RNA sequence: GGGAACGACUCGAGUAGAGUCGAAAACGAUACCGUGCCACGUUUCCUGCACGACGGUCAGUGGUCACCCAAAGCGACUCAGGCGACGUUAUCCAACGCGAUGGACGUGAGUCAGCCGAACAACUGGACCGAUAUGUGUGUUCGCACACAUAUCGGUAAAAGAAACAACAACAACAAC
Reactivity to 2A3 in 0.01 (KOAc 150mM, MgCl2 10mM, bicine 150mM(pH8.5), 24C), signal-to-noise 3, nucleotides 027 to 126: c030g020a040u090a170c040c030g020u030g040c040c030a150c060g000u040u080u030c020c020u010g020c040a050c050g020a020c040g060g010u010c020a060g050u040g020g060u070c030a120c010c010c000a040a090a020g040c070g020a000c010u000c040a040g030g090c050g060a070c030g020u020u010a050u050c050c040a100a190c090g050c120g030a010u050g030g050a030c060g070u020g020a040g020u020c030a020g030c020c010g080a060a040c020a060a010c030u070g050g050
Reactivity to DMS in 0.01 (KOAc 150mM, MgCl2 10mM, bicine 150mM(pH8.5), 24C), signal-to-noise 3, nucleotides 027 to 126: c080g010a180u000a060c070c030g030u010g010c020c170a120c060g000u000u000u000c010c030u000g020c100a000c050g010a050c060g010g010u010c030a040g020u000g010g000u000c060a130c010c020c030a060a170a210g020c020g000a000c020u000c020a070g010g030c040g040a090c070g010u000u000a060u000c050c080a080a060c210g000c060g010a040u000g000g000a040c020g000u000g020a050g010u010c000a090g020c000c040g000a090a050c120a060a080c090u010g000g020